[RMDB]
RNA sequence: GGGAACGACUCGAGUAGAGUCGAAAAGCGGUAGCCAGCAAGAUCUCGUUCAUUGCCGCCACCAAUUACGCGCUCGAUGCGGUGGUCGAGCUGUCCAGUCAGAUGGCCGACGAAGGCCGCAACGACAUCACGAUUACCUGUUCGCAGGUAAUCGUGAAAAAGAAACAACAACAACAAC
Reactivity to DMS in 0.01 (KOAc 150mM, MgCl2 10mM, bicine 150mM(pH8.5), 24C), signal-to-noise 2, nucleotides 027 to 126: g010c100g010g020u000a050g010c060c060a150g000c060a180a080g000a130u000c100u000c080g010u000u000c080a030u020u000g030c020c120g040c000c040a220c000c090a080a100u010u000a080c180g000c180g020c130u000c010g010a100u000g000c020g040g020u000g000g010u000c000g000a040g020c020u000g020u000c020c060a110g040u040c140a090g000a020u000g000g020c000c000g030a060c090g070a070a120g000g000c000c000g000c030a000a040c060g000a030c110a130
Reactivity to 2A3 in 0.01 (KOAc 150mM, MgCl2 10mM, bicine 150mM(pH8.5), 24C), signal-to-noise 1, nucleotides 027 to 126: g000c000g060g010u010a030g040c030c070a050g040c050a170a020g000a120u040c080u030c100g140u100u040c060a050u040u100g010c000c000g040c000c020a040c010c010a030a040u140u100a060c110g030c000g000c060u010c010g000a010u040g000c000g030g000u030g060g000u010c000g020a100g000c020u020g000u000c020c060a070g210u080c000a000g010a030u000g020g000c000c000g030a020c040g070a150a010g190g020c000c000g000c010a010a030c010g030a030c050a060